[RMDB]
RNA sequence: GGGAACGACUCGAGUAGAGUCGAAAAUAAGUCUUCUUCGGAAGACUUAAAAUAAGCUGACCAAGCUAUGUGGUCAAUAUCGUCAUGCACAAUAGAAUAAAAAGCCGAAAAGGUUCGCCUUUUCGAAGUAAAAAGGAAAGUUCGCUUUCCUUUUUACAAAAGAAACAACAACAACAAC
Reactivity to 2A3 in 0.01 (KOAc 150mM, MgCl2 10mM, bicine 150mM(pH8.5), 24C), signal-to-noise 3, nucleotides 027 to 126: u050a000a000g000u000c000u000u000c000u020u080c220g020g010a000a020g010a000c000u000u000a000a000a000a030u150a030a020g070c060u030g000a020c010c010a020a000g010c090u140a080u240g190u040g050g000u060c040a030a040u160a030u140c060g070u030c060a100u160g020c030a020c000a090a170u070a090g120a070a010u130a170a190a040a040a000g050c080c000g030a010a010a000a000g020g000u040u050c110g060c000c010u000u010u000u010c000g000a060a020
Reactivity to DMS in 0.01 (KOAc 150mM, MgCl2 10mM, bicine 150mM(pH8.5), 24C), signal-to-noise 4, nucleotides 027 to 126: u000a010a020g000u000c000u000u000c000u000u020c170g010g000a040a000g010a010c000u000u000a000a050a060a100u000a080a120g010c090u000g000a130c030c020a070a070g010c070u000a060u000g010u000g000g000u000c020a050a080u010a050u010c080g000u000c040a070u000g020c060a050c080a080a060u010a080g000a110a090u010a050a080a050a100a070g000c160c000g000a000a010a000a010g020g000u010u010c200g010c020c010u000u000u000u000c000g000a030a110